This 177-nucleotide RNA was probed chemically with 2A3 and DMS.
RNA sequence: GGGAACGACUCGAGUAGAGUCGAAAACACACCUGGUUCGCCAGGUGUGAAAUAAAAGCUCACCAACCAAAAUAAUCAAGAGCAUGGAUGGAAAAUAAAUAAAAACUGUAAUGUUCGCAUUACAGAAUCUUAACAUAUCGUUCGCGAUAUGUUAAGAAAAAGAAACAACAACAACAAC
Reactivity to 2A3 in 0.01 (KOAc 150mM, MgCl2 10mM, bicine 150mM(pH8.5), 24C), signal-to-noise 2, nucleotides 027 to 126: c010a010c000a010c000c010u010g010g100u070u030c130g050c040c000a000g010g000u010g000u000g010a000a000a000u030a000a070a030a000g040c020u000c040a080c000c010a090a080c000c010a120a060a030a150u180a100a110u200c130a130a070g080a000g160c090a050u030g030g030a000u020g020g050a040a050a120a140u200a060a200a000u230a040a080a070a020a070c010u000g000u010a000a000u020g040u040u070c250g000c100a000u000u000a000c000a000g030a010a020
Reactivity to DMS in 0.01 (KOAc 150mM, MgCl2 10mM, bicine 150mM(pH8.5), 24C), signal-to-noise 2, nucleotides 027 to 126: c010a000c010a000c010c000u000g040g000u000u000c260g020c000c030a000g020g000u000g030u010g000a040a060a030u020a070a070a130a160g000c040u000c010a200c050c000a050a100c080c030a070a050a120a150u000a060a090u000c080a140a120g010a070g040c050a010u000g000g010a090u000g000g000a120a050a060a030u010a010a070a090u000a070a050a040a070a180c000u000g000u000a030a040u000g000u010u000c220g000c010a030u000u000a000c000a000g000a050a050

Record summary: The reactions ran in a buffer of 150 mM KOAc, 10 mM MgCl2 and 150 mM bicine (pH 8.5), at 24 C. Values are in units of 0.01, from 0 to 300, in steps of 10. The 2A3 profile rests on 1,416 reads. The data come from the RNA Mapping Database (RMDB), library M2PK50.